[RMDB]
RNA sequence: GGGAACGACUCGAGUAGAGUCGAAAACAGUGCAUCAAAGAGAGAUCCAGUACGUAGUUAGAGAAGAGAAGACUGGCGAAUUAGCUAGCAUAAUCAGGUGAUUAGAAAAGAACGGAAAUGACGGCUGGAUUAGCUAGCACAGGAGCAACAGCGUGGAGUCAUGAUGGCUGUUCGCAGCCAUCAUGACAAAAGAAACAACAACAACAAC
Reactivity to 2A3 in 0.01 (KOAc 150mM, MgCl2 10mM, bicine 150mM(pH8.5), 24C), signal-to-noise 4, nucleotides 027 to 156: c030a020g030u030g060c020a040u050c090a120a200a020g120a040g000a000g010a020u020c020c010a000g000u080a160c030g030u050a040g060u090u110a050g030a040g020a210a040g020a010g010a140a010g060a090c020u010g000g000c010g040a050a120u140u010a070g000c020u010a000g020c020a110u050a100a030u140c030a020g100g010u110g060a110u080u120a050g130a100a090a060a010g120a050a010c050g070g040a040a080a040u080g030a000c000g000g000c010u010g000g000a010u000u010a000g000c010u010a010g010c010a030c000a050g070g020a020g010c050a000a030c020a050g010c030g100u070g060g030a100
Reactivity to DMS in 0.01 (KOAc 150mM, MgCl2 10mM, bicine 150mM(pH8.5), 24C), signal-to-noise 2, nucleotides 027 to 156: c040a100g040u010g020c060a080u040c070a090a040a170g040a090g010a270g000a020u010c000c000a040g000u000a030c010g000u010a100g000u000u000a050g020a250g030a160a100g010a120g000a180a070g000a150c000u010g070g040c050g010a050a090u000u000a110g040c010u030a010g060c020a100u000a070a080u020c010a120g020g040u000g010a100u000u000a080g000a100a040a080a100g010a090a100c120g030g010a140a090a120u030g050a070c050g000g000c010u000g000g010a050u030u000a080g010c010u020a080g000c000a090c070a110g000g020a160g000c070a040a040c050a020g010c050g010u010g020g000a100
Chemical mapping of a 207-nucleotide RNA with 2A3 and DMS. It was measured as part of the RMDB library OK3TST. For 2A3, 2,092 sequencing reads were counted. The reactions ran in a buffer of 150 mM KOAc, 10 mM MgCl2 and 150 mM bicine (pH 8.5), at 24 C. For DMS the reverse transcriptase was MarathonRT.